The record gives the reactivity of an RNA of 177 nucleotides to DMS and 2A3. For DMS the reverse transcriptase was MarathonRT.
RNA sequence: GGGAACGACUCGAGUAGAGUCGAAAAGAUAUGGAUUUACCCAGACAUGCCUUAGGGUCGGAAACGACCCGAAGGGCAACAGCUGGGACGAAUCCUAAGUCAAAACACCUGCCUUCGGGCAGGUGAAGCUGUUUAUAAUGUUCGCAUUAUAAACAGCAAAAGAAACAACAACAACAAC
Reactivity to DMS in 0.01 (KOAc 150mM, MgCl2 10mM, bicine 150mM(pH8.5), 24C), signal-to-noise 4, nucleotides 027 to 126: g010a020u000a210u010g000g000a010u000u000u000a120c010c010c000a010g010a040c050a300u010g000c000c000u000u010a300g000g000g000u010c000g010g000a060a070a100c010g010a020c010c000c010g010a070a160g010g000g040c010a050a040c240a130g020c010u000g000g000g000a100c280g000a020a000u010c010c000u000a030a110g000u010c040a080a100a210a230c010a000c020c000u000g000c010c010u000u010c300g030g010g020c010a000g000g000u010g010a020a100
Reactivity to 2A3 in 0.01 (KOAc 150mM, MgCl2 10mM, bicine 150mM(pH8.5), 24C), signal-to-noise 3, nucleotides 027 to 126: g010a010u060a030u070g000g000a000u000u010u150a170c000c010c020a010g010a020c100a170u300g010c000c030u230u030a040g000g000g020u000c010g010g010a040a070a020c010g000a000c000c010c010g000a000a000g030g000g000c000a020a000c080a040g010c000u010g030g030g090a140c110g050a020a010u000c000c000u000a050a030g040u020c010a000a020a130a180c010a010c010c010u000g020c000c010u050u110c300g060g000g020c000a000g000g000u000g000a000a010